[RMDB]
RNA sequence: GGGAACGACUCGAGUAGAGUCGAAAAGAUAUGGAGAUCGGACCAGCGACGAUCGUAUGUCGGAAACGACAUACGGGAGCUGUGUCCAUCUCCUAAGUCAAAAUCAGCUUCCUUCGGGAAGCUGAAACGAUGCUAAAAGGUUCGCCUUUUAGCAUCGAAAAGAAACAACAACAACAAC
Reactivity to 2A3 in 0.01 (KOAc 150mM, MgCl2 10mM, bicine 150mM(pH8.5), 24C), signal-to-noise 3, nucleotides 027 to 126: g030a020u080a040u120g000g000a010g010a020u080c240g000g020a000c010c000a010g000c010g300a300c030g010a190u020c010g000u000a000u010g010u000c000g020g000a060a030a030c010g000a000c000a000u010a000c000g000g010g000a010g000c010u010g050u180g000u150c000c000a010u000c000u000c000c000u000a040a020g010u000c000a000a030a010a300u030c000a000g000c010u000u020c000c000u020u080c220g150g000g000a010a000g000c000u000g010a000a000a010
Reactivity to DMS in 0.01 (KOAc 150mM, MgCl2 10mM, bicine 150mM(pH8.5), 24C), signal-to-noise 3, nucleotides 027 to 126: g020a020u000a300u020g000g000a050g030a020u000c210g030g000a010c020c000a000g010c000g000a100c300g000a040u010c010g020u010a000u000g010u010c000g020g010a070a040a200c020g020a010c010a000u000a000c000g020g000g000a020g020c000u000g000u010g010u000c000c010a000u000c000u000c000c000u000a010a070g000u000c020a100a090a180a160u000c000a000g000c000u000u000c000c000u000u030c270g040g010g010a010a000g000c000u000g000a000a050a170